[RMDB]
RNA sequence: GGGAACGACUCGAGUAGAGUCGAAAAGAUAUGGAUGCUUGUCAAGGCAACAGCUCGGAAACGAGACAUGCCUUUGAUGGCAUCCUAAGUCAAAACCAAACUCCAGACUUCGGUCUGGAGUUUGGAAGAUUACACGUCGGUUCGCCGACGUGUAAUCAAAAGAAACAACAACAACAAC
Reactivity to 2A3 in 0.01 (KOAc 150mM, MgCl2 10mM, bicine 150mM(pH8.5), 24C), signal-to-noise 2, nucleotides 027 to 126: g020a010u050a040u130g000g000a020u010g030c110u300u300g090u050c020a030a020g000g000c010a080a050c050a300g010c010u010c010g040g010a100a100a080c030g010a000g020a030c020a080u070g010c000c000u140u010u150g000a010u000g020g000c000a000u000c010c000u000a080a010g020u000c020a000a000a070a170c000c000a000a010a000c000u010c000c000a010g000a000c010u120u300c300g150g000u040c020u000g030g020a000g000u000u010u000g000g010a000a000
Reactivity to DMS in 0.01 (KOAc 150mM, MgCl2 10mM, bicine 150mM(pH8.5), 24C), signal-to-noise 2, nucleotides 027 to 126: g000a040u000a300u000g000g000a000u000g010c000u010u040g010u000c000a020a010g020g000c000a020a070c240a230g000c010u010c010g000g000a110a130a180c000g000a010g000a040c100a220u000g000c010c000u000u000u020g020a010u000g000g020c000a000u000c020c000u020a000a070g000u010c030a100a090a070a180c000c000a000a000a010c000u000c000c000a000g000a000c000u000u020c170g040g000u000c000u000g000g010a000g000u000u000u010g000g000a050a090